[RMDB]
RNA sequence: GGGAACGACUCGAGUAGAGUCGAAAAUAGGUUUUCGAACCUACCACCACCGUAGGUGGCGGCGCCUAGCACGCGAUAAGUAUGAGAUUCGAAAGAGUCUGGUACUUUUGACGCGUGGGUCGGCCACCUAAACGGAAUAGGGUCACUUCGGUGACAAACCGAUUAAAAGAUUCGUCUUUUAAUCGGUAAAAGAAACAACAACAACAAC
Reactivity to DMS in 0.01 (KOAc 150mM, MgCl2 10mM, bicine 150mM(pH8.5), 24C), signal-to-noise 2, nucleotides 027 to 156: u010a050g010g020u000u000u000u010c260g020a030a070c020c000u000a000c040c020a140c020c010a120c010c030g070u000a040g020g010u000g020g020c000g030g020c110g020c030c000u000a090g060c050a030c000g010c000g010a140u010a020a020g030u010a030u000g000a020g000a020u000u000c010g030a270a170a300g020a020g010u000c010u000g030g040u000a000c000u000u020u000u000g000a090c000g020c010g000u000g020g010g000u000c030g030g040c000c010a040c010c000u000a010a030a050c020g000g000a110a160u000a080g000g010g010u000c000a040c040u000u010c250g040g000u010g000a020c010a060a130
Reactivity to 2A3 in 0.01 (KOAc 150mM, MgCl2 10mM, bicine 150mM(pH8.5), 24C), signal-to-noise 6, nucleotides 027 to 156: u090a020g020g040u030u030u080u090c240g060a020a010c000c000u020a050c010c040a040c000c020a040c010c010g010u010a020g000g010u020g000g010c000g040g050c070g070c040c030u120a130g150c040a010c000g010c000g030a040u010a060a010g010u010a000u050g300a020g000a010u000u020c020g030a100a080a060g000a030g010u000c000u010g010g020u000a010c000u030u060u030u120g210a100c010g000c000g000u010g010g010g010u070c100g130g020c000c000a000c000c000u010a060a040a000c000g000g100a020a060u230a200g130g020g010u000c010a000c010u070u090c300g110g000u010g010a000c000a020a040
Chemical mapping of a 207-nucleotide RNA with DMS and 2A3. The data come from the RNA Mapping Database (RMDB), library RNAMAK. The DMS profile rests on 4,455 reads. DMS adducts were read by reverse transcription with MarathonRT. Conditions: 150 mM KOAc, 10 mM MgCl2 and 150 mM bicine (pH 8.5), 24 C.